[RMDB]
RNA sequence: GGGAACGACUCGAGUAGAGUCGAAAACCGGAAGCAGGCUGAGGACUUCACGGUCACUCCCGGCGCGAACGGCGCGCUCGACGUGGUCGAGUUCACCGAAGGCGAGGACGGCGGUCGCGAUGUGCGGAGUUUCCUAUGACUUCGGUCAUAGGAAACUAAAAGAAACAACAACAACAAC
Reactivity to DMS in 0.01 (KOAc 150mM, MgCl2 10mM, bicine 150mM(pH8.5), 24C), signal-to-noise 2, nucleotides 027 to 126: c010c000g000g020a070a060g020c040a070g000g030c040u000g020a140g020g020a100c050u010u000c070a060c090g020g010u000c070a110c100u000c030c010c010g020g000c040g000c010g000a070a140c070g000g000c000g000c100g000c020u000c010g010a060c050g030u010g020g010u010c030g010a090g010u000u020c080a030c010c010g010a120a170g010g010c020g000a050g010g000a090c070g000g000c030g000g000u000c000g020c030g010a100u000g010u010g030c110g010g010
Reactivity to 2A3 in 0.01 (KOAc 150mM, MgCl2 10mM, bicine 150mM(pH8.5), 24C), signal-to-noise 2, nucleotides 027 to 126: c000c020g000g030a050a000g070c050a010g240g040c070u110g040a090g010g080a110c020u010u040c110a090c200g000g010u020c040a030c060u010c000c000c000g010g000c030g000c000g010a030a020c040g070g010c000g000c010g010c030u010c000g050a030c070g180u210g150g000u050c020g060a060g000u100u150c010a020c040c040g050a050a050g060g000c030g000a030g050g030a010c070g010g050c000g000g000u020c020g000c020g070a110u140g050u080g100c080g030g040